[RMDB]
The data come from the RNA Mapping Database (RMDB), library M2PK50.
An RNA of 177 nucleotides, treated with DMS and 2A3 and read out base by base.
The reactions ran in a buffer of 150 mM KOAc, 10 mM MgCl2 and 150 mM bicine (pH 8.5), at 24 C.
For 2A3, 14,452 sequencing reads were counted.
For DMS, 9,696 sequencing reads were counted.
For DMS the reverse transcriptase was MarathonRT.
Reactivities are given for positions 27 through 126.
RNA sequence: GGGAACGACUCGAGUAGAGUCGAAAAGAAGGCACUUUCGAGUGCCUUCAUGGGGAGCUCAGGUCUCCCUCCCUUGCAAUCUCCCUAAGGGAGGAGACCUAAUUAGGUGCACUUUCGAGUGCACCAAUCCAUGUUACAUGUUCGCAUGUAACAUGGAAAAAGAAACAACAACAACAAC
Reactivity to DMS in 0.01 (KOAc 150mM, MgCl2 10mM, bicine 150mM(pH8.5), 24C), signal-to-noise 5, nucleotides 027 to 126: g010a020a000g010g010c000a010c000u000u000u010c170g010a020g020u000g000c000c000u000u000c010a020u010g010g000g000g000a170g010c120u010c120a020g000g010u000c000u000c090c020c020u000c010c000c000u000u000g010c180a100a100u000c130u000c040c010c030u000a030a030g000g000g000a040g010g010a020g010a010c000c000u000a040a040u010u000a090g010g010u000g000c000a000c000u000u000u010c180g010a030g030u000g000c000a000c000c000a030a030
Reactivity to 2A3 in 0.01 (KOAc 150mM, MgCl2 10mM, bicine 150mM(pH8.5), 24C), signal-to-noise 5, nucleotides 027 to 126: g000a000a000g000g000c020a020c030u060u090u180c260g090a010g000u000g000c010c000u000u000c000a000u010g000g000g010g000a060g050c070u070c190a010g030g010u000c000u040c030c050c000u010c000c000c000u000u010g060c070a150a230u040c050u080c090c010c000u070a020a010g020g000g000a000g000g010a000g000a000c000c000u010a030a090u120u150a040g000g000u000g000c000a000c000u030u060u100c250g100a010g000u000g000c000a000c000c000a000a000